[RMDB]
RNA sequence: GGGAACGACUCGAGUAGAGUCGAAAAGGUUCGGGGCGCCCAAAAUGAUCGGGGCUCAAAUCCACCACCGAGACCUGGCCGCACCCCUCACAGGGUGAUCGCGUAGGUCGGCGUUCUGUUCGGGUGGGUCCUGUGGUCAUUUCGAUGACCACAGGACAAAAGAAACAACAACAACAAC
Reactivity to DMS in 0.01 (KOAc 150mM, MgCl2 10mM, bicine 150mM(pH8.5), 24C), signal-to-noise 2, nucleotides 027 to 126: g000g000u000u020c060g010g020g000g030c090g000c020c000c000a020a060a090a150u050g000a020u020c150g010g010g000g060c110u010c070a000a070a110u050c010c030a030c080c000a090c000c010g000a060g010a000c010c000u000g000g000c050c100g100c000a000c000c000c000c000u000c260a130c300a160g010g000g010u000g000a090u030c080g000c000g010u000a030g000g020u010c030g000g000c120g000u020u000c020u000g000u000u000c170g030g010g000u000g000g030
Reactivity to 2A3 in 0.01 (KOAc 150mM, MgCl2 10mM, bicine 150mM(pH8.5), 24C), signal-to-noise 2, nucleotides 027 to 126: g100g020u100u090c100g020g000g000g000c070g290c000c000c030a040a180a000a090u140g040a020u120c080g050g000g000g020c020u000c010a150a170a020u010c000c000a000c000c000a040c000c040g000a040g000a020c030c010u000g010g080c010c030g030c010a010c000c000c010c000u010c000a040c050a020g000g000g020u020g000a070u190c040g010c090g110u010a030g000g020u000c010g000g000c100g010u060u020c080u050g060u060u040c050g060g000g000u020g050g000

This 177-nucleotide RNA was probed chemically with DMS and 2A3.
It was measured as part of the RMDB library RFM100.
As a SHAPE reagent, 2A3 marks flexible, mostly unpaired nucleotides at the ribose 2'-OH.
For DMS the reverse transcriptase was MarathonRT.
Conditions: 150 mM KOAc, 10 mM MgCl2 and 150 mM bicine (pH 8.5), 24 C.